Source: RMDB library TTRDEL, as collected in RNAgym. This 177-nucleotide RNA was probed chemically with DMS. The RNA was probed in 150 mM KOAc, 10 mM MgCl2 and 150 mM bicine (pH 8.5) at 24 C. For DMS the reverse transcriptase was MarathonRT.

RNA sequence: GGGAACGACUCGAGUAGAGUCGAAAAGAUAUGGAUGAAGGAGCUGCACUUCCUAUAAUCUCGGAAACGAGGUAGGAAGUGACCCAGCGAAUUCAUCCUAAGUCAAACCUGUCCUUCGGGACAGGAACAUUGACCCCAGGUUCGCCUGGGGUCAAUGAAAAGAAACAACAACAACAAC
Reactivity to DMS in 0.01 (KOAc 150mM, MgCl2 10mM, bicine 150mM(pH8.5), 24C), signal-to-noise 1, nucleotides 027 to 126: g000a040u000a270u010g000g000a030u000g030a030a020g000g010a300g000c000u030g140c000a010c000u010u000c000c000u000a030u000a300a060u000c000u000c000g000g000a090a060a160c010g020a000g000g060u000a000g000g000a010a010g000u000g020a030c300c280c100a000g000c000g010a300a140u000u000c000a000u000c000c000u000a000a060g000u000c040a090a090a140c000c000u000g020u000c000c000u000u000c230g030g000g000a000c000a000g000g000a030a110